[RMDB]
RNA sequence: GGGAACGACUCGAGUAGAGUCGAAAACCUACUCAAUACGUCCUAGUCGUACAGAACGGUAACAUGUUUUCCGAACAUCCGCGCUUGGGUAUACGAGUAUACACCUUACCCAACCCUCGCCAACGGGAGUGCAUCCACGAGUUCGCUCGUGGAUGAAUAUGACGCUUAUAUUCGUAUAAGCGUCAUAAAAAGAAACAACAACAACAAC
Reactivity to 2A3 in 0.01 (KOAc 150mM, MgCl2 10mM, bicine 150mM(pH8.5), 24C), signal-to-noise 6, nucleotides 027 to 156: c000c000u020a030c020u010c030a050a090u050a100c030g090u040c020c000u040a020g030u080c020g030u060a080c040a110g050a130a030c010g030g000u070a060a040c050a170u170g080u060u060u050u050c010c010g020a070a010c020a080u060c040c040g040c010g020c060u020u010g020g020g000u050a030u010a060c080g020a020g060u010a020u070a040c070a070c040c050u120u150a070c010c010c000a040a090c020c000c010u050c040g060c050c020a080a050c030g030g000g020a050g040u050g030c000a000u000c000c000a000c000g010a000g010u070u090c190g060c140u000c000g000u000g000g000a000u000g000a000a000
Reactivity to DMS in 0.01 (KOAc 150mM, MgCl2 10mM, bicine 150mM(pH8.5), 24C), signal-to-noise 3, nucleotides 027 to 156: c020c020u000a090c050u010c020a110a110u010a050c020g020u000c020c000u000a110g000u000c090g020u000a200c060a040g010a110a140c010g000g020u000a100a110c090a100u000g000u000u000u000u000c030c010g020a090a130c040a080u000c030c000g020c020g020c030u010u000g000g030g040u000a050u010a090c070g000a130g030u000a090u000a130c100a090c100c040u000u000a040c020c000c000a050a070c020c010c020u000c100g020c050c040a100a090c050g010g000g010a110g020u000g020c000a030u000c000c000a000c000g000a020g010u000u010c290g040c020u000c000g050u000g010g010a000u000g000a030a080